[RMDB]
RNA sequence: GGGAACGACUCGAGUAGAGUCGAAAAUUUUCAUUCAAUCUAUUGUAAUUAGGACAUUUAGUAAUCAUUCCAUGGCUGUCUAGAGCAAACUCCUGUCUUAGCUUAUAUGAUAAUGAUUUAGGGUCGAGCCUGGAUAUAAUUUCGAUUAUAUCCAGGCAAAAGAAACAACAACAACAAC
Reactivity to 2A3 in 0.01 (KOAc 150mM, MgCl2 10mM, bicine 150mM(pH8.5), 24C), signal-to-noise 6, nucleotides 027 to 126: u060u020u020u020c040a040u140u070c030a020a130u010c030u170a130u070u160g060u160a070a140u100u080a080g030g070a030c030a050u110u130u070a080g030u140a090a080u080c020a030u090u010c060c020a020u080g020g000c010u030g010u050c050u040a030g010a030g050c040a110a060a150c040u020c000c020u020g020u030c030u040u040a020g020c020u090u080a080u030a020u250g080a070u050a170a050u100g060a040u030u120u140a070g040g020g020u030c010g000a000
Reactivity to DMS in 0.01 (KOAc 150mM, MgCl2 10mM, bicine 150mM(pH8.5), 24C), signal-to-noise 3, nucleotides 027 to 126: u030u030u000u000c020a070u030u010c080a080a070u030c050u000a040u030u020g000u010a060a080u020u010a040g010g000a040c080a070u000u000u030a060g000u010a060a090u020c060a030u000u000c070c060a010u000g010g000c030u000g000u020c030u010a030g000a100g000c090a060a050a080c090u000c050c040u010g010u000c010u000u000a030g010c070u000u040a050u020a020u000g000a100u010a030a060u010g010a050u000u010u010a080g000g000g010u000c040g010a210